Chemical mapping of a 177-nucleotide RNA with DMS and 2A3. The 2A3 profile rests on 1,859 reads. It was measured as part of the RMDB library TTRINS. 2A3 adducts were read by reverse transcription with SuperScript II with manganese. Conditions: 150 mM KOAc, 10 mM MgCl2 and 150 mM bicine (pH 8.5), 24 C.

RNA sequence: GGGAACGACUCGAGUAGAGUCGAAAAGAUAUGGAUAACAAACCUGAUGGUACUGAUGACCUUACGUAACAUCCAUCGGAAACGAUGGUGGUAAGCAAGGUGAGAGUCAGGUUUGUUAUCCUAAGUCGUAGAUGGGAAAGUUCGCUUUCCCAUCUACAAAAGAAACAACAACAACAAC
Reactivity to DMS in 0.01 (KOAc 150mM, MgCl2 10mM, bicine 150mM(pH8.5), 24C), signal-to-noise 3, nucleotides 027 to 126: g010a110u010a300u000g020g000a010u010a000a000c010a000a010a000c000c010u000g010a040u010g030g030u010a090c130u020g000a120u000g020a060c300c010u000u000a020c000g000u010a010a080c110a010u020c000c010a000u010c000g010g000a160a080a130c000g000a010u000g020g020u010g000g000u000a020a050g020c020a020a050g020g020u000g000a130g020a300g010u000c000a020g010g010u000u000u010g000u000u000a000u000c000c010u000a020a070g020u010c120
Reactivity to 2A3 in 0.01 (KOAc 150mM, MgCl2 10mM, bicine 150mM(pH8.5), 24C), signal-to-noise 1, nucleotides 027 to 126: g080a060u160a060u210g040g050a000u000a020a000c020a020a010a000c000c010u030g030a080u260g030g240u240a030c000u060g130a300u160g130a140c010c000u010u010a030c010g020u030a060a000c030a300u060c020c000a000u020c000g020g000a030a060a000c010g030a000u020g000g000u000g050g000u020a030a000g000c060a170a230g000g050u060g070a300g040a030g090u080c050a080g000g000u010u010u000g010u000u020a030u000c000c000u000a000a000g000u000c010